[RMDB]
RNA sequence: GGGAACGACUCGAGUAGAGUCGAAAAGCAAAGCACAUGAAGCACAUGAAGCACAUGAAGCACAUGAAGCACAUGAAGCACAUGAAGCACAUGAAGCACAUGAAGCACAUCAAGCACAUGAAAAAAAGUAACUGUUUACGUUCGCGUAAACAGUUACAAAAGAAACAACAACAACAAC
Reactivity to DMS in 0.01 (KOAc 150mM, MgCl2 10mM, bicine 150mM(pH8.5), 24C), signal-to-noise 2, nucleotides 027 to 126: g030c100a060a230a110g010c030a200c080a040u000g000a030a110g020c020a200c020a050u000g000a020a190g020c000a100c020a110u000g000a080a070g020c020a100c030a020u000g030a150a120g060c050a190c060a020u000g000a040a060g010c040a130c030a050u000g010a080a120g000c000a090c000a090u000g000a020a080g030c020a070c010a020u000g000a050a180g000c000a040c070a000u030c030a040a060g010c000a000c020a070u010g000a000a000a080a160a120a050a130
Reactivity to 2A3 in 0.01 (KOAc 150mM, MgCl2 10mM, bicine 150mM(pH8.5), 24C), signal-to-noise 2, nucleotides 027 to 126: g040c050a020a060a050g000c010a000c020a070u050g060a100a020g020c020a020c000a060u040g040a020a030g010c000a010c010a030u020g050a110a010g000c020a050c000a080u050g070a120a010g040c040a010c010a090u090g000a150a030g000c020a010c010a060u020g060a060a020g000c010a010c000a030u060g020a080a020g000c000a000c000a040u060g030a090a020g000c010a030c000a060u110c040a030a010g020c010a040c000a090u130g160a080a070a000a000a000a000a010
Notes
The data come from the RNA Mapping Database (RMDB), library M2PK90. Structure probing data (DMS and 2A3) for a 177-nucleotide construct. 2A3 is a SHAPE reagent: it acylates the 2'-hydroxyl of flexible nucleotides of all four kinds. For 2A3 the reverse transcriptase was SuperScript II with manganese. The 2A3 profile rests on 3,132 reads. The RNA was probed in 150 mM KOAc, 10 mM MgCl2 and 150 mM bicine (pH 8.5) at 24 C.